An RNA of 177 nucleotides, treated with DMS and 2A3 and read out base by base. It was measured as part of the RMDB library OK2TST. For 2A3 the reverse transcriptase was SuperScript II with manganese. Conditions: 150 mM KOAc, 10 mM MgCl2 and 150 mM bicine (pH 8.5), 24 C.
[RMDB]
RNA sequence: GGGAACGACUCGAGUAGAGUCGAAAAUGGAGAUGGAGUGGUGGAAUUGGUCACUGGAGAAGAUCAAAGCGGCAAUGCCCAUGCUGUGCUCGUCUAAUAUUGUUGGCCUGCACAAGUAUUGGCUCGAGUCACUUCCCUUAUUCGUAAGGGAAGUGACAAAAGAAACAACAACAACAAC
Reactivity to DMS in 0.01 (KOAc 150mM, MgCl2 10mM, bicine 150mM(pH8.5), 24C), signal-to-noise 4, nucleotides 027 to 126: u000g020g000a070g010a070u000g010g010a080g020u010g020g010u000g000g000a090a130u000u000g030g010u000c090a060c090u010g010g010a090g020a080a060g010a080u000c070a050a080a110g020c080g010g020c070a100a070u010g000c050c010c050a030u000g010c010u000g000u000g000c010u000c190g010u000c010u010a040a090u000a140u010u000g020u000u000g010g010c000c030u000g000c020a010c020a030a040g010u000a030u000u000g000g000c020u010c120g000a230
Reactivity to 2A3 in 0.01 (KOAc 150mM, MgCl2 10mM, bicine 150mM(pH8.5), 24C), signal-to-noise 3, nucleotides 027 to 126: u110g020g000a050g020a050u080g050g030a040g040u050g040g000u040g000g070a050a050u060u020g020g000u050c030a010c080u020g000g030a070g010a080a040g010a010u040c000a050a030a040g020c020g000g010c030a050a100u130g000c000c000c010a000u020g000c000u000g000u000g020c020u010c010g030u010c020u070a090a110u210a210u200u260g170u100u050g010g000c000c010u010g000c000a000c010a070a040g010u020a040u010u050g010g000c020u040c050g050a040